[RMDB]
RNA sequence: GGGAACGACUCGAGUAGAGUCGAAAAUCUAAUUGACCGCUUAAAAGCGGAACGUUGUGAGAAUUGCGACAUAAAAACUUCACUGUAAAUUCAUCAUAUUGGGACAAUUCACAAUGUGAAUCGCCAACAAAGGAGAACCAUUCGUGGUUCUCCUUUGAAAAGAAACAACAACAACAAC
Reactivity to DMS in 0.01 (KOAc 150mM, MgCl2 10mM, bicine 150mM(pH8.5), 24C), signal-to-noise 2, nucleotides 027 to 126: u000c030u000a080a150u010u000g000a270c010c010g050c010u010u010a110a070a180a120g050c010g000g000a100a050c100g020u000u000g030u000g010a080g020a060a050u000u000g000c030g000a270c030a060u000a070a010a090a030a110c110u000u000c110a050c160u030g000u030a020a060a090u000u000c100a080u010c100a020u000a120u000u010g000g000g020a260c190a040a050u020u000c000a030c020a080a070u020g000u010g010a000a040u000c020g020c110c050a030a230